[RMDB]
The data come from the RNA Mapping Database (RMDB), libraries RFM100 and RFMREP. An RNA of 177 nucleotides, treated with DMS and 2A3 and read out base by base. DMS adducts were read by reverse transcription with MarathonRT. Reactivities are given for positions 27 through 126. The RNA was probed in 150 mM KOAc, 10 mM MgCl2 and 150 mM bicine (pH 8.5) at 24 C. For 2A3 the reverse transcriptase was SuperScript II with manganese.

RNA sequence: GGGAACGACUCGAGUAGAGUCGAAAAUCGCCCCGAACAUUGGGGAGUAGCCGGCCUUAGUCAACUAAGGGAUCUGCGUCAACAUUCUUGGCCCGCAGGCCAUGGUGCAGAUAGUCGCAAGACUUGGAGUAUGAAAUUCCUUCGGGAAUUUCAUACUAAAAGAAACAACAACAACAAC
Reactivity to DMS in 0.01 (KOAc 150mM, MgCl2 10mM, bicine 150mM(pH8.5), 24C), signal-to-noise 5, nucleotides 027 to 126: u030c060g000c010c000c000c020g010a140a100c250a130u030u020g010g000g000g010a050g020u010a050g010c000c020g000g000c000c000u000u010a020g000u020c230a150a130c010u000a030a020g000g030g000a020u010c020u000g020c000g000u010c010a060a120c210a120u030u020c150u020u010g010g010c010c010c300g010c300a150g000g000c010c010a020u000g000g000u000g010c010a010g000a010u010a020g000u000c010g010c160a070a070g000a030c020u000u010g010g010
Reactivity to 2A3 in 0.01 (KOAc 150mM, MgCl2 10mM, bicine 150mM(pH8.5), 24C), signal-to-noise 7, nucleotides 027 to 126: u080c010g030c000c000c000c010g080a170a050c100a280u190u240g010g020g000g000a010g050u040a030g030c010c020g040g020c000c000u020u020a020g050u120c060a130a150c230u020a020a000g000g010g010a010u000c010u010g000c010g010u010c000a050a070c020a260u160u140c060u080u050g010g000c000c020c070g230c210a150g010g000c000c000a010u010g010g000u010g000c000a000g010a010u030a010g030u020c010g000c060a070a020g010a020c000u020u060g030g000